The data come from the RNA Mapping Database (RMDB), library TTRDEL. Chemical mapping of a 177-nucleotide RNA with 2A3 and DMS. For 2A3 the reverse transcriptase was SuperScript II with manganese.

[RMDB]
RNA sequence: GGGAACGACUCGAGUAGAGUCGAAAAGAUAUGGAGUGGGCUAAUCUGGAGUCUACUCUCGGAAACGAGAGAAUAGACUAUGAAGGACAACCCACUCCUAAGUCAAACCAAGGGUUCGCCCUUGGAACUAUUUGUAAACCUUCGGGUUUACAAAUAGAAAAGAAACAACAACAACAAC
Reactivity to 2A3 in 0.01 (KOAc 150mM, MgCl2 10mM, bicine 150mM(pH8.5), 24C), signal-to-noise 2, nucleotides 027 to 126: g020a020u050a050u120g000g000a000g000u020g030g010g000c050u100a170a160u020c020u030g000g040a020g010u020c010u000a020c010u000c010u010c010g010g000a060a040a030c010g000a010g000a010g040a180a300u130a050g000a000c010u030a300u160g090a090a070g000g000a000c040a040a050c010c010c000a000c010u020c000c000u010a020a000g010u000c010a000a010a100c000c000a000a010g010g000g030u070u140c300g150c030c000c000u000u050g010g010a020a030
Reactivity to DMS in 0.01 (KOAc 150mM, MgCl2 10mM, bicine 150mM(pH8.5), 24C), signal-to-noise 2, nucleotides 027 to 126: g010a010u000a300u000g010g000a010g030u000g000g000g000c030u000a190a300u000c000u000g030g000a010g010u000c000u010a040c000u000c000u010c000g000g000a110a070a220c030g010a020g010a020g000a120a110u010a010g030a020c000u000a190u010g010a170a200g000g000a040c100a080a230c000c000c000a000c030u000c000c000u000a000a040g000u000c010a100a090a120c000c000a010a010g000g000g040u000u000c190g010c010c000c000u000u000g010g010a070a150